[RMDB]
RNA sequence: GGGAACGACUCGAGUAGAGUCGAAAACUGCACUCGCUCUGCCCGAAGCUGUGUUGUGUGGGGAGAACGGACGGAGAGAUCCGUUGAAGAUGGUGCAACUGAGUAUGCGAGAGCAUUUGAAUGCAGGGCGUAUACGGUCCUUCGGGAUCGUAUGCGCAAAAGAAACAACAACAACAAC
Reactivity to 2A3 in 0.01 (KOAc 150mM, MgCl2 10mM, bicine 150mM(pH8.5), 24C), signal-to-noise 9, nucleotides 027 to 126: c010u020g010c010a010c010u030c020g020c010u010c010u040g100c010c010c010g040a060a030g020c050u060g020u030g010u210u030g020u010g030u110g030g050g020g020a090g040a040a010c010g020g010a010c000g080g050a060g000a020g010a280u000c000c000g000u000u020g020a030a030g050a050u150g030g050u070g010c000a010a010c030u040g020a010g070u110a050u140g030c020g020a010g000a000g020c010a030u030u060u090g050a060a020u050g000c010a010g010g030
Reactivity to DMS in 0.01 (KOAc 150mM, MgCl2 10mM, bicine 150mM(pH8.5), 24C), signal-to-noise 8, nucleotides 027 to 126: c040u000g000c020a030c030u000c030g010c030u000c020u010g000c020c020c010g010a100a100g000c060u020g010u020g010u000u000g020u000g020u010g000g000g000g010a060g000a020a040c030g010g000a020c020g000g000a050g000a190g010a140u000c000c000g010u000u000g010a110a110g010a060u040g010g010u010g020c020a060a120c050u010g000a070g010u010a020u010g000c020g000a010g000a180g010c000a030u000u010u020g010a060a080u020g010c000a030g000g000
This 177-nucleotide RNA was probed chemically with 2A3 and DMS. DMS adducts were read by reverse transcription with MarathonRT. The RNA was probed in 150 mM KOAc, 10 mM MgCl2 and 150 mM bicine (pH 8.5) at 24 C. Source: RMDB library OK1LIB, as collected in RNAgym. For 2A3, 22,872 sequencing reads were counted.